[RMDB]
RNA sequence: GGGAACGACUCGAGUAGAGUCGAAAAGACGACGGCCGGGUGGUGAUGGUGGUCGAGGAAGUCGCCGCCGACGAACUGCGCUGCCGGGUGCUGAUCGGCGGCCCGCUGUCCGACCACAAGGGCAUCACCUGGAUUUACGAUUCGUCGUAAAUCCAGGAAAAGAAACAACAACAACAAC
Reactivity to DMS in 0.01 (KOAc 150mM, MgCl2 10mM, bicine 150mM(pH8.5), 24C), signal-to-noise 4, nucleotides 027 to 126: g010a050c020g000a030c050g010g000c030c030g020g000g000u000g020g010u000g010a060u010g020g020u000g010g010u000c010g000a180g010g000a120a040g020u000c300g000c010c000g010c010c010g000a030c020g020a140a180c140u000g000c050g010c040u000g010c100c170g000g010g000u000g010c050u010g000a240u000c010g000g000c000g010g000c020c040c100g010c020u000g000u000c050c000g010a030c000c000a020c020a100a060g020g010g010c010a020u000c020a050
Reactivity to 2A3 in 0.01 (KOAc 150mM, MgCl2 10mM, bicine 150mM(pH8.5), 24C), signal-to-noise 2, nucleotides 027 to 126: g050a010c060g020a000c000g040g050c000c040g010g010g040u040g000g000u020g030a070u070g110g020u020g000g000u020c010g010a160g040g010a060a000g020u040c010g030c000c000g000c010c000g060a030c010g020a100a090c060u100g000c020g010c060u070g170c110c070g120g020g010u050g000c030u110g010a210u020c020g000g000c030g000g000c030c030c010g050c000u050g110u000c020c000g000a010c000c010a000c010a020a030g060g040g010c000a030u040c010a020
The record gives the reactivity of an RNA of 177 nucleotides to DMS and 2A3. 2A3 adducts were read by reverse transcription with SuperScript II with manganese. Values are in units of 0.01, from 0 to 300, in steps of 10. For DMS the reverse transcriptase was MarathonRT. Reactivities are given for positions 27 through 126. In probing experiments dimethyl sulfate is read out at A N1 and C N3, which are open when not base-paired. It was measured as part of the RMDB library OK2TST.